The record gives the reactivity of an RNA of 177 nucleotides to DMS and 2A3. Reactivities are given for positions 27 through 126.
RNA sequence: GGGAACGACUCGAGUAGAGUCGAAAACGGACCGUAAACCCCUGAACGGAGGGGCGUCAGCAGUAGCUAGUGGCAUCAGUUACUGCUGUAAACCCGUAGAGUUCAGGAGAUUGGGGUCGGUGGCGGCUCACACUUCACACUUCGGUGUGAAGUGUGAAAAAGAAACAACAACAACAAC
Reactivity to DMS in 0.01 (KOAc 150mM, MgCl2 10mM, bicine 150mM(pH8.5), 24C), signal-to-noise 1, nucleotides 027 to 126: c060g020g000a040c000c020g040u010a020a130a030c070c040c000c010u000g010a040a000c040g020g000a140g000g000g000g000c140g000u000c030a020g000c010a020g000u000a000g010c000u000a240g000u010g000g010c220a190u020c050a000g010u000u000a000c010u000g000c000u000g010u000a000a100a150c000c000c000g000u080a290g030a120g000u010u000c000a020g000g020a030g010a060u010u000g000g000g000g060u000c020g000g000u020g000g020c100g020g000c100
Reactivity to 2A3 in 0.01 (KOAc 150mM, MgCl2 10mM, bicine 150mM(pH8.5), 24C), signal-to-noise 2, nucleotides 027 to 126: c030g020g000a000c000c040g060u060a000a070a120c000c000c000c000u010g000a040a010c010g050g120a060g010g000g030g010c010g050u030c000a000g000c010a010g000u010a000g020c010u050a020g070u100g200g110c090a130u070c020a070g000u020u000a000c020u000g000c010u000g000u000a010a010a010c000c000c000g020u030a030g050a000g030u010u000c000a000g060g000a020g000a000u050u120g050g010g000g060u000c030g020g000u090g010g000c060g040g000c000
The RNA was probed in 150 mM KOAc, 10 mM MgCl2 and 150 mM bicine (pH 8.5) at 24 C. It was measured as part of the RMDB library RFM100.